[RMDB]
RNA sequence: GGGAACGACUCGAGUAGAGUCGAAAAUCGGAGCUGGGCAGAACAAUGGUACCUGCUGGGUCUUCUCAACAUGGUGGAGGGCCAAUUCUUUCUUGUCUCAUAGGAGCCUUCUUGAGUCCCUGGGAGGUGGUAUUAUAAGAUUCGUCUUAUAAUACCAAAAAGAAACAACAACAACAAC
Reactivity to 2A3 in 0.01 (KOAc 150mM, MgCl2 10mM, bicine 150mM(pH8.5), 24C), signal-to-noise 5, nucleotides 027 to 126: u090c010g040g000a030g040c030u060g000g040g000c030a020g020a100a040c050a100a120u100g070g010u070a090c010c010u030g020c030u040g010g000g040u020c040u120u020c030u040c020a040a140c060a090u120g040g030u070g040g070a050g010g030g000c010c010a020a070u060u040c010u030u100u010c020u040u090g050u010c020u000c060a080u120a120g150g020a050g060c010c000u030u050c000u040u050g020a060g050u040c000c020c010u030g010g020g020a040g000g020
Reactivity to DMS in 0.01 (KOAc 150mM, MgCl2 10mM, bicine 150mM(pH8.5), 24C), signal-to-noise 9, nucleotides 027 to 126: u010c080g010g000a080g010c040u000g010g000g020c070a050g000a070a080c140a100a090u000g010g010u000a070c060c020u000g010c050u000g010g000g010u000c060u000u000c050u000c060a080a100c110a070u010g010g020u000g000g010a060g010g010g010c040c050a050a080u000u000c050u000u000u000c040u000u000g010u010c020u000c040a090u010a110g010g010a130g010c020c020u000u000c040u000u000g010a120g010u000c030c010c010u010g000g000g000a050g000g020
Background: Structure probing data (2A3 and DMS) for a 177-nucleotide construct. For DMS, 22,428 sequencing reads were counted. Source: RMDB library OK2TST, as collected in RNAgym. Conditions: 150 mM KOAc, 10 mM MgCl2 and 150 mM bicine (pH 8.5), 24 C.